Conditions: 150 mM KOAc, 10 mM MgCl2 and 150 mM bicine (pH 8.5), 24 C. Structure probing data (DMS and 2A3) for a 207-nucleotide construct. In probing experiments dimethyl sulfate is read out at A N1 and C N3, which are open when not base-paired. For 2A3 the reverse transcriptase was SuperScript II with manganese. For 2A3, 7,049 sequencing reads were counted. It was measured as part of the RMDB library ARCHII.

[RMDB]
RNA sequence: GGGAACGACUCGAGUAGAGUCGAAAAUACCAAUUCGGAUCAAACAAACUAAAUGCGAACUCUAACGAGCUUGCCCUCGCCGCUUAAUUGACGGUGACGUUCCUCCAGUGAAGUCUGUGAAUUGGAGGGGCGACUACUUACAGGCUGGCCAAAAGAGGUAGUGUAUGAUGUUCGCAUCAUACACUACAAAAGAAACAACAACAACAAC
Reactivity to DMS in 0.01 (KOAc 150mM, MgCl2 10mM, bicine 150mM(pH8.5), 24C), signal-to-noise 2, nucleotides 027 to 156: u000a150c030c010a090a210u000u000c000g030g020a080u010c130a070a120a220c050a080a070a230c080u010a070a090a090u000g000c030g030a030a040c030u020c000u000a080a170c170g020a050g010c000u010u000g030c020c060c030u010c000g050c020c000g020c000u000u000a060a130u000u000g020a050c000g030g000u010g000a080c000g000u000u010c040c000u000c000c020a060g070u000g000a150a050g020u000c020u000g000u040g010a110a050u000u020g030g010a050g000g000g000g010c000g000a070c030u000a120c050u000u000a080c050a030g020g000c030u000g010g000c030c020a060a070a090a030g000a110g000
Reactivity to 2A3 in 0.01 (KOAc 150mM, MgCl2 10mM, bicine 150mM(pH8.5), 24C), signal-to-noise 8, nucleotides 027 to 156: u130a010c010c010a020a060u180u130c050g050g040a060u160c110a060a090a130c080a100a100a060c090u220a130a090a050u200g070c070g050a060a020c010u000c010u040a040a030c070g020a030g010c000u030u040g020c010c000c010u010c000g010c010c000g010c010u070u100a160a150u300u150g050a180c010g010g000u010g000a010c000g000u010u000c000c000u000c000c000a000g000u020g030a060a010g050u020c050u050g070u060g030a040a030u020u000g000g000a000g000g000g000g020c000g010a000c010u110a050c010u080u100a030c010a010g010g000c010u020g030g000c020c020a050a100a020a000g030a020g020